[RMDB]
RNA sequence: GGGAACGACUCGAGUAGAGUCGAAAACUCCUUGGGUUCUUGGGAGCAGCAGGAAGCACUAUGGGCGCAGCGUCAUUGACGCUGACGGUACAGGCCAGACUAUUAUUGUCUGGUAUAGUGCAACAGCACGCUUCAUUGGAUUCGUCCAAUGAAGCGUAAAAGAAACAACAACAACAAC
Reactivity to 2A3 in 0.01 (KOAc 150mM, MgCl2 10mM, bicine 150mM(pH8.5), 24C), signal-to-noise 7, nucleotides 027 to 126: c020u030c010c000u060u060g110g050g010u050u020c020u030u050g040g010g010a060g020c020a020g030c020a030g080g080a130a010g000c000a000c000u010a030u090g030g070g030c030g000c010a000g000c000g000u000c070a300u030u300g000a000c000g010c000u000g060a070c000g020g020u130a060c000a010g080g000c000c000a000g000a000c000u040a070u300u060a150u290u230g010u000c000u010g010g000u010a010u010a000g000u000g000c000a010a010c010a000g060c020
Reactivity to DMS in 0.01 (KOAc 150mM, MgCl2 10mM, bicine 150mM(pH8.5), 24C), signal-to-noise 4, nucleotides 027 to 126: c070u000c010c030u010u010g010g010g010u000u000c030u000u010g010g000g010a050g010c110a100g000c050a080g010g000a110a220g000c010a010c000u000a020u010g030g030g000c020g000c010a010g010c010g000u000c000a240u010u060g020a020c000g020c000u010g010a040c010g030g000u040a070c040a220g010g000c000c000a000g000a010c010u000a090u030u040a120u030u010g000u000c000u000g010g000u000a000u010a010g010u000g000c010a070a230c080a060g000c070
The record gives the reactivity of an RNA of 177 nucleotides to 2A3 and DMS. It was measured as part of the RMDB libraries RFM100 and RFMREP. The reactions ran in a buffer of 150 mM KOAc, 10 mM MgCl2 and 150 mM bicine (pH 8.5), at 24 C.